[RMDB]
RNA sequence: GGGAACGACUCGAGUAGAGUCGAAAAUACGUGACCUUCGGGUCACGUAACCGGCGUUCCCAAGUCAAAAAGAGAGACGCAUUCUCGACAGCGGCCUUUUCGUAUGAGUUGCUUUCGAGCAACUCAAUCGAUAGGUCUGUUUCGACAGACCUAUCGAAAAAGAAACAACAACAACAAC
Reactivity to 2A3 in 0.01 (KOAc 150mM, MgCl2 10mM, bicine 150mM(pH8.5), 24C), signal-to-noise 2, nucleotides 027 to 126: u050a000c010g000u000g000a010c010c020u060u010c290g100g020g000u010c000a000c000g000u000a000a000c030c010g050g080c010g000u000u010c000c020c010a000a010g150u090c030a010a060a040a210a040g080a000g020a000g020a030c020g050c050a020u140u070c040u040c100g040a040c050a010g010c030g000g080c020c020u000u160u130u120c060g020u080a090u190g000a000g010u000u010g010c000u060u010u130c250g080a010g000c000a030a020c000u000c000a000a030
Reactivity to DMS in 0.01 (KOAc 150mM, MgCl2 10mM, bicine 150mM(pH8.5), 24C), signal-to-noise 2, nucleotides 027 to 126: u000a000c000g020u010g010a000c000c000u010u020c230g020g020g050u000c000a000c010g020u000a030a150c090c020g000g040c060g010u000u000c000c000c020a150a050g010u020c100a080a070a060a060a080g000a050g000a030g000a070c060g000c050a100u000u010c050u010c080g000a050c140a110g020c000g030g000c030c020u000u000u000u000c070g010u000a140u000g000a020g010u000u000g000c000u000u000u020c110g040a030g000c010a000a000c000u000c000a020a030

Overview: An RNA of 177 nucleotides, treated with 2A3 and DMS and read out base by base. For 2A3, 1,464 sequencing reads were counted. 2A3 adducts were read by reverse transcription with SuperScript II with manganese. It was measured as part of the RMDB library M2PK50. For DMS, 1,397 sequencing reads were counted.